[RMDB]
The record gives the reactivity of an RNA of 177 nucleotides to DMS and 2A3. For 2A3 the reverse transcriptase was SuperScript II with manganese. It was measured as part of the RMDB library OK1LIB.
RNA sequence: GGGAACGACUCGAGUAGAGUCGAAAAGUCCAUGGGGUCGAAAGCGUACUUGGCCCGGCAUUUGACCUCGUAAAAGGCCAGGGGGGUCUUGGGGACUGGGGCCAGGUAGCCGUGAAUGUCCCGAGGAGUCAAAAGGAGUCUUCGGACUCCUUUUGACAAAAGAAACAACAACAACAAC
Reactivity to DMS in 0.01 (KOAc 150mM, MgCl2 10mM, bicine 150mM(pH8.5), 24C), signal-to-noise 1, nucleotides 027 to 126: g000u000c010c020a060u020g000g010g020g000u000c030g000a050a180a170g010c030g020u010a000c030u000u000g000g000c000c000c000g000g000c020a160u030u000u030g000a050c010c010u000c010g010u010a030a090a090a040g000g000c000c020a180g010g010g020g000g000g070u010c020u000u020g010g000g010g000a130c020u010g010g020g000g000c020c010a000g010g030u000a020g000c080c030g070u040g000a060a150u000g000u020c000c000c000g000a070g010g000a170
Reactivity to 2A3 in 0.01 (KOAc 150mM, MgCl2 10mM, bicine 150mM(pH8.5), 24C), signal-to-noise 1, nucleotides 027 to 126: g110u010c000c000a030u060g020g000g000g020u020c020g100a130a000a050g000c020g000u000a000c000u020u010g040g000c000c030c070g000g010c020a060u100u000u150g120a130c000c000u080c060g000u140a060a080a090a000g030g000c000c020a090g220g070g010g000g000g000u000c000u050u010g040g000g030g010a020c040u150g050g000g030g000c000c010a000g000g000u000a050g100c100c000g000u040g040a160a010u170g070u030c000c000c000g040a130g000g000a070